[RMDB]
Source information: An RNA of 207 nucleotides, treated with 2A3 and DMS and read out base by base. 2A3 adducts were read by reverse transcription with SuperScript II with manganese.
RNA sequence: GGGAACGACUCGAGUAGAGUCGAAAAAGUGGCUCUCCGACCGGGUCUCCGCGCUGCGCACCGCGCUGGAAACGGACACCCCGGGUAGCGAAGGGCGGUAACAGUGCGACACCCCCAGUCCCCGGCCGUGCCGUCCGAGCAGCCCAGCGGCCAGGUGCUCUAGAUCACAUUUCGAUGUGAUCUAGAGAAAAGAAACAACAACAACAAC
Reactivity to 2A3 in 0.01 (KOAc 150mM, MgCl2 10mM, bicine 150mM(pH8.5), 24C), signal-to-noise 1, nucleotides 027 to 156: a000g170u110g000g000c010u030c000u000c010c010g060a060c060c000g020g020g020u030c020u010c010c030g060c030g010c060u130g080c030g000c030a090c090c030g030c000g020c050u070g030g040a130a070a030c020g020g010a040c000a070c010c000c020c000g020g000g090u120a040g060c070g060a030a130g060g010g050c300g010g000u100a130a000c040a040g170u200g240c080g040a020c030a050c070c010c000c010c010a000g020u140c080c010c000c020g000g010c080c020g030u080g020c000c030g030u020c000c000g010a020g040c000a040g000c000c000c000a020g010c000g020g000c050c000a040g000g060u040g000
Reactivity to DMS in 0.01 (KOAc 150mM, MgCl2 10mM, bicine 150mM(pH8.5), 24C), signal-to-noise 1, nucleotides 027 to 156: a160g000u000g010g000c000u000c000u000c000c030g010a120c030c020g030g000g000u000c010u000c000c000g020c020g050c000u000g020c030g010c030a090c050c030g000c000g010c000u000g020g010a080a060a080c010g010g030a110c030a070c060c030c020c070g000g020g030u000a050g030c020g010a100a170g000g000g040c000g000g000u000a100a200c030a180g000u000g020c130g010a250c100a110c000c000c000c000c030a300g000u000c150c020c010c000g000g040c020c000g020u000g000c010c020g010u000c000c020g000a250g060c000a160g000c040c010c010a140g040c000g010g050c020c020a100g000g040u010g000
The reactions ran in a buffer of 150 mM KOAc, 10 mM MgCl2 and 150 mM bicine (pH 8.5), at 24 C.
Reactivities are given for positions 27 through 156.